RNA sequence: GGGAACGACUCGAGUAGAGUCGAAAAAGAAGUCCUACUGAUCAAACAUGCGCUUCCAAUAGUAGAAGGACGUUAAGCAUUUAUCAUUGAACUAUAAUUGUUCAUUGAAGUCAUUGAUGCAAACUCCUUGGUCACACACACAUACGGCGCGGAAGGCGCCAUACGAUGAGUUCGCUCAUCGUAUGGCAAAAGAAACAACAACAACAAC
Reactivity to DMS in 0.01 (KOAc 150mM, MgCl2 10mM, bicine 150mM(pH8.5), 24C), signal-to-noise 4, nucleotides 027 to 156: a070g010a110a110g030u000c020c020u000a220c070u000g000a110u000c050a090a090a090c040a060u000g030c050g030c000u000u010c050c030a090a140u020a120g020u000a060g000a110a030g010g030a020c090g030u000u000a070a240g030c030a040u000u010u000a150u020c010a010u000u000g010a010a010c010u000a140u010a080a180u000u020g020u000u000c000a020u000u000g010a030a170g000u000c190a170u010u010g020a030u000g000c000a180a050a040c030u000c010c000u000u000g000g010u000c040a060c040a100c070a040c050a060c080a080u000a060c060g020g010c030g030c030g020g010a080a050g020g020c100
Reactivity to 2A3 in 0.01 (KOAc 150mM, MgCl2 10mM, bicine 150mM(pH8.5), 24C), signal-to-noise 9, nucleotides 027 to 156: a000g110a060a010g070u030c050c010u030a070c060u110g090a150u160c100a100a110a050c050a120u140g000c060g010c030u100u040c050c030a110a140u080a150g070u030a040g050a080a010g020g010a010c120g010u030u030a120a050g000c000a010u010u040u100a090u060c010a010u000u010g000a000a000c010u040a030u150a300a200u220u140g000u000u000c000a010u000u020g010a050a010g060u110c080a090u050u220g010a000u010g000c000a020a020a040c000u000c010c000u030u050g060g030u130c020a030c000a010c010a000c000a000c000a130u100a190c080g010g000c020g000c020g040g010a050a000g050g010c030